[RMDB]
RNA sequence: GGGAACGACUCGAGUAGAGUCGAAAAGAUAUGGAUAAGAACUACUGCGAUGUGGCGAAGAACUUCCUCCAUACCUCGGAAACGAGGUAUGGAGGAAGGGAGCCACUAAGCAGCUUAUCCUAAGUCACUGCAUAGAUUAGUUCGCUAAUCUAUGCAGAAAAGAAACAACAACAACAAC
Reactivity to 2A3 in 0.01 (KOAc 150mM, MgCl2 10mM, bicine 150mM(pH8.5), 24C), signal-to-noise 1, nucleotides 027 to 126: g040a020u120a050u140g000g000a010u000a070a010g030a130a150c110u300a020c000u300g030c010g020a070u250g020u000g010g020c070g200a290a030g000a050a070c000u020u000c010c040u000c000c000a010u000a000c020c000u060c040g000g100a020a140a120c040g000a000g000g040u000a010u020g020g000a000g000g010a000a000g000g000g000a000g020c000c040a000c010u000a000a000g000c000a050g000c000u010u010a000u000c000c020u020a140a070g020u000c000a010
Reactivity to DMS in 0.01 (KOAc 150mM, MgCl2 10mM, bicine 150mM(pH8.5), 24C), signal-to-noise 2, nucleotides 027 to 126: g010a050u000a300u010g010g000a000u000a010a020g000a110a060c050u010a300c020u000g020c000g010a300u020g010u000g010g020c020g000a070a190g020a130a150c000u000u000c020c000u010c010c000a020u000a000c010c020u000c000g010g010a110a090a260c020g030a030g010g020u000a020u000g000g010a000g000g000a000a000g040g010g000a190g020c000c000a000c000u000a100a300g010c000a000g010c020u000u000a010u000c000c000u000a050a190g000u000c020a270